[RMDB]
RNA sequence: GGGAACGACUCGAGUAGAGUCGAAAAAGCUAUCUAGAUAUGGAAAGAGCGAUGAGAUCCGAACUACCUACGAAUUCGGAAACGAAUUCGUUAGGCGGAUCGAGCUCUUUCCUAAGUCCAUAUGAAAGAUUUUCUUACUCUUCGGAGUAAGAAAAUCAAAAGAAACAACAACAACAAC
Reactivity to DMS in 0.01 (KOAc 150mM, MgCl2 10mM, bicine 150mM(pH8.5), 24C), signal-to-noise 1, nucleotides 027 to 126: a230g030c050u020a050u010c120u000a070g000a050u000a300u010g010g000a020a020a000g020a000g030c000g030a150u000g000a270g020a000u020c000c040g050a070a050c070u000a300c050c000u000a000c000g000a000a020u000u000c000g000g020a010a060a090c010g020a000a000u020u000c000g010u010u020a000g130g000c000g030g000a010u000c000g000a070g000c000u000c020u000u000u000c000c000u000a020a110g020u000c000c070a080u030a100u020g010a080a140a100
This 177-nucleotide RNA was probed chemically with DMS. Conditions: 150 mM KOAc, 10 mM MgCl2 and 150 mM bicine (pH 8.5), 24 C. The data come from the RNA Mapping Database (RMDB), library TTRDES. For DMS the reverse transcriptase was MarathonRT. Reactivities are given for positions 27 through 126.